[RMDB]
RNA sequence: GGGAACGACUCGAGUAGAGUCGAAAAGAUGGUCAGGGGCUCACUCAGUCCCACUUCAGACUCACCCCCUAGGUGUCACCUCCAGGUGGGGUUGGUGUCACCGCAGCACUGUCUCAAGAGAGAUGGGGCAGAUGUGGGAGCCAAAAGCACAUACAUGUCAGCAUACGUGGUUCGCCACGUAUGCUGAAAAAGAAACAACAACAACAAC
Reactivity to 2A3 in 0.01 (KOAc 150mM, MgCl2 10mM, bicine 150mM(pH8.5), 24C), signal-to-noise 1, nucleotides 027 to 156: g060a030u160g020g040u060c100a090g070g010g010g000c010u020c060a230c050u140c090a020g010u020c000c000c020a060c050u070u100c030a050g000a110c000u030c070a090c000c010c000c040c110u090a060g000g000u010g010u030c030a040c000c000u020c000c000a060g000g110u130g070g000g010g000u030u060g000g000u050g030u030c050a050c030c000g000c000a030g000c020a060c010u020g000u040c000u010c020a100a090g100a010g010a000g010a170u040g060g010g000g000c050a000g030a020u060g020u040g020g000g010a020g050c020c030a030a120a100a070g080c060a020c020a130u260a030c040a080u200g060